Structure probing data (DMS and 2A3) for a 177-nucleotide construct. The 2A3 profile rests on 940 reads. For DMS, 727 sequencing reads were counted.
RNA sequence: GGGAACGACUCGAGUAGAGUCGAAAAAGAUUGACACGGUGGUGCGCAUGAUGCUCAGGAUAGCGCAUCUACGGCAUCAUCUGCGGUGAGCAACUGAUGCCCUCAACGCCGCGUGUGGUCGCAGGUCCAGUCCGCGUGGAUUCGUCCACGCGGACUGAAAAGAAACAACAACAACAAC
Reactivity to DMS in 0.01 (KOAc 150mM, MgCl2 10mM, bicine 150mM(pH8.5), 24C), signal-to-noise 1, nucleotides 027 to 126: a020g000a080u000u040g020a060c020a000c000g000g010u000g040g010u000g020c030g060c060a000u000g030a040u000g010c020u000c050a210g000g010a210u000a130g030c270g000c010a010u000c010u010a120c250g000g000c000a010u000c010a020u000c030u000g010c030g000g060u000g000a160g000c020a040a010c180u000g000a040u010g000c000c010c120u000c300a010a070c070g020c010c010g000c010g000u000g060u000g000g040u010c020g000c240a070g000g020u000c030
Reactivity to 2A3 in 0.01 (KOAc 150mM, MgCl2 10mM, bicine 150mM(pH8.5), 24C), signal-to-noise 1, nucleotides 027 to 126: a020g030a020u120u190g230a040c030a000c100g160g040u050g130g000u010g000c070g000c030a050u130g020a000u030g010c010u010c060a040g300g130a260u270a130g000c010g010c030a040u000c040u050a030c080g040g000c000a000u030c010a010u000c010u020g000c010g050g060u220g160a080g050c020a000a000c050u000g020a060u040g000c040c050c000u130c080a060a050c050g000c000c020g040c000g000u080g010u020g040g000u050c040g000c060a070g000g080u090c010